[RMDB]
RNA sequence: GGGAACGACUCGAGUAGAGUCGAAAAGGGGUCAUGGGAGAGUCCGAAUGGAGCUGAUGACCCAUACUGAAGCCUCCACGGUAUGGCAAGGCUCCACGGACUCUUUGAUCAUGACGGAGGCACCCAAAAGUGCUAGGAUGUUCGCAUCCUAGCACAAGUGAUUUGCAUGAUUCGUCAUGCAAAUCACAAAAGAAACAACAACAACAAC
Reactivity to 2A3 in 0.01 (KOAc 150mM, MgCl2 10mM, bicine 150mM(pH8.5), 24C), signal-to-noise 2, nucleotides 027 to 156: g000g010g100g030u010c000a000u000g000g000g010a020g000a010g000u010c000c000g030a110a220u140g000g000a000g000c000u000g030a260u020g010a110c010c000c000a000u000a000c010u040g050a080a020g000c000c000u020c000c010a000c010g020g000u000a000u000g000g030c070a170a300g040g010c010u000c010c000a000c000g000g010a010c000u000c000u000u050u000g000a000u010c000a000u000g000a010c010g000g000a020g000g000c000a010c010c000c000a010a160a040a050g000u000g000c000u000a000g010g000a010u010g020u100u140c290g030c100a010u000c000c000u000a000g000c000a010c010a010a000